[RMDB]
About this RNA
An RNA of 170 nucleotides, treated with 2A3 and DMS and read out base by base. Conditions: 150 mM KOAc, 10 mM MgCl2 and 150 mM bicine (pH 8.5), 24 C. It was measured as part of the RMDB library 15KLIB. The 2A3 profile rests on 2,743 reads.

RNA sequence: GGGAACGACUCGAGUAGAGUCGAAAAUUCUUCGCCUUCCGGAGCUCCUUCUCGAGAUCCUCAGCUUUUUUCCUUGAGUUCACCCACUGCUCGAGGACGUCUUCCCUUCCCCCGCGAUUCUUCUUCGACACGCGAGGCUUCGGCCUCGCGAAAAGAAACAACAACAACAAC
Reactivity to 2A3 in 0.01 (KOAc 150mM, MgCl2 10mM, bicine 150mM(pH8.5), 24C), signal-to-noise 2, nucleotides 027 to 129: u030u000c000u060u010c000g030c000c000u020u030c020c000g010g000a020g030c000u000c000c010u130u050c020u020c030g070a060g020a060u080c010c010u100c040a060g020c010u020u050u000u070u090u100c010c030u000u000g040a010g060u060u010c040a160c030c010c000a060c020u060g000c000u030c010g030a010g000g010a020c020g000u020c030u060u060c000c000c010u060u120c000c000c000c000c010g080c000g020a100u130u040c000u140u020c000u050u020c070g090a040c000a040
Reactivity to DMS in 0.01 (KOAc 150mM, MgCl2 10mM, bicine 150mM(pH8.5), 24C), signal-to-noise 2, nucleotides 027 to 129: u100u000c000u000u000c050g020c070c000u060u030c000c070g030g050a130g050c140u000c050c000u000u030c050u000c100g000a090g020a140u020c050c050u070c120a050g020c110u000u000u000u000u060u000c000c000u050u020g040a100g000u050u000c100a090c060c060c000a070c170u020g000c000u000c080g000a000g060g050a140c070g000u050c030u060u010c000c000c070u040u010c000c010c070c000c000g100c130g000a130u030u000c010u030u000c040u000u000c110g000a050c140a160